RNA sequence: GGGAACGACUCGAGUAGAGUCGAAAAUUGCGCUCUGGCCGUUUACCCGAUUGGUGCACGCGUUCAGCGCGCCGAUCGCCUACCUGUUCCGGCCCUACAUCGUGUACCGCAGCCGCGAGGUGGCGGCUAAAAUCGGAUGAUUCGUCAUCCGAUUUUAAAAAGAAACAACAACAACAAC
Reactivity to DMS in 0.01 (KOAc 150mM, MgCl2 10mM, bicine 150mM(pH8.5), 24C), signal-to-noise 9, nucleotides 027 to 126: u010u000g000c050g010c040u000c050u000g010g010c020c020g000u000u000u000a100c050c040c100g000a110u010u000g010g020u010g010c050a060c050g000c150g000u000u010c140a080g020c060g010c030g020c010c060g000a040u000c040g010c050c050u000a080c080c050u000g010u000u000c060c020g010g000c020c010c030u000a060c080a080u000c060g010u000g010u010a110c040c030g010c130a110g010c040c010g000c080g010a120g010g020u000g000g010c020g010g000c060
Reactivity to 2A3 in 0.01 (KOAc 150mM, MgCl2 10mM, bicine 150mM(pH8.5), 24C), signal-to-noise 6, nucleotides 027 to 126: u060u070g030c010g010c020u040c050u080g040g000c020c000g000u040u070u110a090c020c020c010g090a150u060u240g020g010u040g010c080a020c090g040c040g040u190u190c080a010g020c010g010c000g000c020c010g030a030u020c030g000c010c010u070a070c010c020u050g040u090u040c050c000g020g000c000c000c000u050a050c020a150u090c050g040u040g030u090a050c010c030g040c020a020g010c020c000g030c010g020a080g080g080u050g030g000c020g010g000c000
Structure probing data (DMS and 2A3) for a 177-nucleotide construct. For 2A3, 9,911 sequencing reads were counted. DMS (dimethyl sulfate) methylates the pairing face of unpaired adenines and cytosines. It was measured as part of the RMDB library OK2TST.